This 207-nucleotide RNA was probed chemically with DMS and 2A3. Values are in units of 0.01, from 0 to 300, in steps of 10. The RNA was probed in 150 mM KOAc, 10 mM MgCl2 and 150 mM bicine (pH 8.5) at 24 C. The DMS profile rests on 3,208 reads. The 2A3 profile rests on 1,372 reads.
[RMDB]
RNA sequence: GGGAACGACUCGAGUAGAGUCGAAAAAGGAAAACAGAAUGAAGGCAAAGGGAUGGGAAGCAAGGGCAAUGUGGCUAAAAAUAUUGAUGCUCUUAAGCCAUGUGUUCCAAAUUUAAAGCAAUACAUUCAUGGUUUUAAAGCUGGAACCUGCAACUAAUAACUAUGUCUGGUUCGCCAGACAUAGUUAAAAAGAAACAACAACAACAAC
Reactivity to DMS in 0.01 (KOAc 150mM, MgCl2 10mM, bicine 150mM(pH8.5), 24C), signal-to-noise 2, nucleotides 027 to 156: a060g030g010a050a050a060a140c030a080g010a070a100u030g010a070a050g010g010c050a050a120a090g030g010g020a070u000g010g000g010a090a050g040c050a070a060g010g050g010c010a080a070u000g030u000g020g000c030u000a010a080a070a140a090u000a100u020u000g000a080u000g040c020u000c070u000u000a110a080g000c050c040a080u030g010u000g000u000u000c000c010a020a040a090u000u000u000a050a040a070g010c040a040a040u000a090c160a070u000u000c110a070u010g000g000u000u000u010u010a000a010a010g030c170u030g010g000a010a010c050c030u000g020c050a050a110c050u030a060a180
Reactivity to 2A3 in 0.01 (KOAc 150mM, MgCl2 10mM, bicine 150mM(pH8.5), 24C), signal-to-noise 3, nucleotides 027 to 156: a000g070g010a040a070a040a000c030a010g040a060a080u140g010a060a020g050g010c070a080a060a010g020g000g010a040u030g000g000g010a020a010g080c040a030a030g010g020g000c010a040a060u060g000u030g020g000c000u030a060a030a000a070a060u140a110u100u160g080a060u070g000c010u020c000u110u070a030a000g000c020c000a040u040g080u030g010u070u030c060c010a010a040a020u040u050u020a010a040a000g010c030a090a030u080a170c010a080u020u220c030a040u110g040g000u000u010u010u030a010a010a010g030c040u010g010g000a000a000c000c020u060g020c020a040a030c060u220a080a090